[RMDB]
RNA sequence: GGGAACGACUCGAGUAGAGUCGAAAAAAGGCUCCGGCAGUGGCGACUGGCGUACUGACGGAUUCAUCGUUGGGGUCGGUUAUAAAUUCUGAUUAGCCAGGUAACACAGUGUUAUGACAGCCCGCCGUCGUUAAAACCAGUUCGCUGGUUUUAACGAAAAAGAAACAACAACAACAAC
Reactivity to DMS in 0.01 (KOAc 150mM, MgCl2 10mM, bicine 150mM(pH8.5), 24C), signal-to-noise 2, nucleotides 027 to 126: a090a190g010g020c050u010c040c060g000g040c020a070g050u010g010g000c030g020a300c040u000g010g020c010g040u010a020c040u010g010a010c010g000g020a130u000u010c190a130u000c030g000u000u010g000g000g010g000u000c040g010g010u020u000a230u000a010a090a080u010u000c010u000g000a070u000u010a080g000c020c010a040g010g000u010a010a020c060a090c160a080g000u000g030u010u020a010u010g030a110c170a190g000c010c010c030g020c020c050g010

Source information
This 177-nucleotide RNA was probed chemically with DMS. The data come from the RNA Mapping Database (RMDB), library OK2TST. DMS adducts were read by reverse transcription with MarathonRT. High DMS reactivity at an A or C suggests that its Watson-Crick edge is free. For DMS, 1,202 sequencing reads were counted.